RNA sequence: GGGAACGACUCGAGUAGAGUCGAAAAAAUUAGUUUUUUGUACCAAAGACAUUAAUACUUUAAUGAGAUACGGUAGACAUCCUUCUUUCGUGAAAUGCACUAGUCUUGACGUAUACGGACGUCGUGUACGCAGUAUUAUAGCAUCUAUUAGAUAUCGCAGUACUUGAGUUUUCGAACUCAAGUACUGAAAAGAAACAACAACAACAAC
Reactivity to 2A3 in 0.01 (KOAc 150mM, MgCl2 10mM, bicine 150mM(pH8.5), 24C), signal-to-noise 4, nucleotides 027 to 156: a000a010u210u110a090g030u030u020u040u010u080u100g050u050a020c020c000a070a050a020g070a060c020a060u080u120a120a040u240a280c070u180u130u130a070a050u130g030a040g030a140u040a080c030g020g010u030a030g020a060c020a040u050c030c000u070u100c030u070u220u100c100g030u090g100a070a050a020u060g010c010a020c110u020a010g020u000c000u030u110g040a080c000g010u010a010u020a010c030g070g110a130c120g160u300c000g010u050g010u000a000c010g020c020a000g020u030a010u100u000a050u060a030g000c010a010u000c030u110a110u100u090a080g060a100u050a060u170c100g000
Reactivity to DMS in 0.01 (KOAc 150mM, MgCl2 10mM, bicine 150mM(pH8.5), 24C), signal-to-noise 2, nucleotides 027 to 156: a050a080u010u000a110g000u010u000u000u010u000u000g010u010a070c050c020a060a070a140g000a130c030a030u010u000a040a080u010a050c040u000u000u000a050a080u010g000a080g000a080u000a050c140g030g050u000a050g010a090c050a040u000c060c030u000u000c120u000u000u000c090g020u010g000a070a050a060u010g000c030a080c070u010a090g020u000c030u000u000g000a050c010g030u000a030u000a040c040g000g010a210c180g010u030c020g040u000g030u000a010c020g020c010a050g010u000a030u010u000a040u000a070g020c040a040u000c030u000a130u010u000a120g020a090u000a040u010c080g050